[RMDB]
RNA sequence: GGGAACGACUCGAGUAGAGUCGAAAAAAGAGGCAUACUAUGGAGAAUUAUGAACUAGAGAAGCACUGUUACGACUUGUUACGUGACUGUGAUGCUGUAGCUCCCCAUGAUUUCUUCAUCUUUGAUGCAUAGGUCCAUGCUUCGGCAUGGACCUAUGAAAAGAAACAACAACAACAAC
Reactivity to 2A3 in 0.01 (KOAc 150mM, MgCl2 10mM, bicine 150mM(pH8.5), 24C), signal-to-noise 1, nucleotides 027 to 126: a000a000g100a030g030g030c000a040u060a100c020u040a110u040g000g000a000g010a010a000u020u020a020u010g010a010a020c030u000a010g020a010g020a170a010g000c010a000c020u020g000u020u000a000c000g040a040c030u100u130g100u240u180a080c040g020u000g000a000c000u000g000u010g000a000u050g030c000u070g040u000a010g000c010u110c000c030c000c000a020u030g000a030u020u150u020c000u020u000c020a040u030c060u090u110u090g060a020u070g000
Reactivity to DMS in 0.01 (KOAc 150mM, MgCl2 10mM, bicine 150mM(pH8.5), 24C), signal-to-noise 1, nucleotides 027 to 126: a090a010g010a070g000g000c030a010u000a080c100u000a080u000g010g000a010g000a020a020u010u000a010u000g020a020a160c020u000a000g000a020g010a020a020g000c000a040c000u000g000u010u000a000c020g020a140c120u010u010g000u030u010a160c020g030u000g000a020c000u010g020u000g020a000u000g030c000u000g000u000a030g010c090u010c100c300c100c010a010u010g010a020u000u000u000c010u000u000c020a020u000c280u000u000u000g030a060u000g010
An RNA of 177 nucleotides, treated with 2A3 and DMS and read out base by base.
It was measured as part of the RMDB library 15KREP.
Values cover nucleotides 27 to 126.
The reactions ran in a buffer of 150 mM KOAc, 10 mM MgCl2 and 150 mM bicine (pH 8.5), at 24 C.